[RMDB]
RNA sequence: GGGAACGACUCGAGUAGAGUCGAAAAAUACAGCGUAAUCGAGCGGAGGAAAACGGCACUCCGAAAAUCCGGUACGAUAAUGAUCCCACUGCGUCGACGCUAGAUGCAGAACCGGAUUGCCGAGGAAUCAGUUUUAACUCUUCGGAGUUAAAACUGAAAAAGAAACAACAACAACAAC
Reactivity to 2A3 in 0.01 (KOAc 150mM, MgCl2 10mM, bicine 150mM(pH8.5), 24C), signal-to-noise 1, nucleotides 027 to 126: a000u140a020c070a020g000c000g090u080a090a040u180c050g000a030g120c010g030g000a010g000g060a110a230a020a090c030g010g000c030a000c020u000c010c010g000a020a000a000a020u000c000c000g000g040u050a060c090g090a090u090a170a100u270g160a040u000c020c010c000a010c000u000g000c000g040u020c010g030a090c150g010c150u090a050g000a030u010g050c000a000g070a020a010c010c000g000g040a000u010u020g070c000c010g000a010g010g100a040a070
Reactivity to DMS in 0.01 (KOAc 150mM, MgCl2 10mM, bicine 150mM(pH8.5), 24C), signal-to-noise 2, nucleotides 027 to 126: a070u000a070c080a200g000c000g010u020a110a090u010c060g020a060g030c010g020g000a020g000g000a100a070a070a160c040g010g010c020a040c070u000c000c010g000a050a050a010a010u000c000c010g020g000u000a110c170g000a090u040a180a030u010g020a080u000c000c000c000a300c040u000g000c030g010u000c020g000a060c300g000c170u000a040g010a010u020g040c000a010g000a060a010c010c020g010g060a010u000u000g030c030c000g000a130g010g000a140a190